The data come from the RNA Mapping Database (RMDB), library M2RFPK. Chemical mapping of a 207-nucleotide RNA with 2A3.
RNA sequence: GGGAACGACUCGAGUAGAGUCGAAAAGAUCGGAAACCGCAGCAGGUGAGUCCGCCUUAUGUGAAGGAUCGGCUGAAACACGAGGAAAUACUGAGCCAACGCAAGACGGUAGCCGAACAGUAGCAACAAAACGCUUACGUGUUCGCACGUAAGCGAACGUAAGGAGACGGUUCGCCGUCUCCUUACGAAAAGAAACAACAACAACAAC
Reactivity to 2A3 in 0.01 (KOAc 150mM, MgCl2 10mM, bicine 150mM(pH8.5), 24C), signal-to-noise 2, nucleotides 027 to 156: g010a140u040c010g030g000a030a020a080c040c000g050c000a050g010c010a060g010g000u010g010a010g140u020c060c050g040c010c000u170u140a150u100g170u080g140a150a000g070g010a060u130c010g070g000c020u150g060a050a070a020c050a020c050g040a060g000g120a030a190a000u120a120c050u060g020a010g040c030c020a050a100c100g030c050a070a060g110a020c040g030g000u070a030g010c000c000g060a030a060c060a060g120u140a010g010c030a000a030c010a090a010a000a000c020g000c010u000u030a000c020g000u020g020u010u050c170g000c090a010c000g010u000a010a000g000c000g000a010a000